[RMDB]
RNA sequence: GGGAACGACUCGAGUAGAGUCGAAAAAUGGGAAUCACCAUACCAGGGCGAAUCUCUUCCGAAAGGAAGAGUAGGGUUACUCCUUCGACCCGAGCCCGUCAGCUAACCUCGCAAGCGUCCGAAGGAGAAAUGAUCAUGAGUUCGCUCAUGAUCAUUUAAAAGAAACAACAACAACAAC
Reactivity to DMS in 0.01 (KOAc 150mM, MgCl2 10mM, bicine 150mM(pH8.5), 24C), signal-to-noise 8, nucleotides 027 to 126: a030u010g000g000g010a180a080u040c140a120c030c010a020u010a210c040c040a210g010g010g020c000g000a030a150u010c010u000c000u000u000c000c000g010a110a100a180g000g000a010a000g000a010g000u000a030g010g010g010u000u000a080c010u000c010c000u010u000c010g000a020c010c010c000g000a120g000c000c000c000g000u040c140a060g010c080u010a100a090c060c030u010c080g000c100a090a040g000c100g010u020c080c040g000a010a010g010g000a010g000
Reactivity to 2A3 in 0.01 (KOAc 150mM, MgCl2 10mM, bicine 150mM(pH8.5), 24C), signal-to-noise 7, nucleotides 027 to 126: a000u090g000g000g060a100a220u260c090a090c110c000a020u040a090c030c040a070g000g000g000c010g010a020a030u020c000u000c000u000u000c000c010g030a070a020a010g010g000a000a000g000a000g000u000a000g010g000g000u010u010a090c010u000c010c000u000u000c000g000a000c000c010c000g000a000g000c010c000c000g030u020c000a000g020c040u080a060a100c020c030u090c060g050c070a100a050g050c030g130u060c050c050g010a010a000g000g000a020g010
Description
An RNA of 177 nucleotides, treated with DMS and 2A3 and read out base by base.